[RMDB]
The record gives the reactivity of an RNA of 177 nucleotides to 2A3. Values cover nucleotides 27 to 126. Conditions: 150 mM KOAc, 10 mM MgCl2 and 150 mM bicine (pH 8.5), 24 C.
RNA sequence: GGGAACGACUCGAGUAGAGUCGAAAACGGGCUUCCGCAGUGAGAUCCCUGGGACUGUCUUACCGCGGCUGGUUCCUUGUCAUGUUCCAUCGGUUUGUGGGUCCCCUUUCCGGUGUCGUCUCCAUCGGUGGGAUGGCUGAUUCGUCAGCCAUCCCACAAAAGAAACAACAACAACAAC
Reactivity to 2A3 in 0.01 (KOAc 150mM, MgCl2 10mM, bicine 150mM(pH8.5), 24C), signal-to-noise 1, nucleotides 027 to 126: c030g030g030g020c010u040u040c050c000g060c040a020g050u000g060a010g040a080u060c030c000c000u000g090g000g000a050c050u050g030u060c010u020u100a070c000c030g020c000g030g030c020u060g040g000u080u110c000c020u040u040g030u050c050a060u130g070u110u000c040c000a040u030c000g010g110u020u100u200g110u210g060g010g000u080c000c000c000c000u070u070u010c030c000g020g000u050g070u080c030g030u010c040u050c030c010a070u020c030g100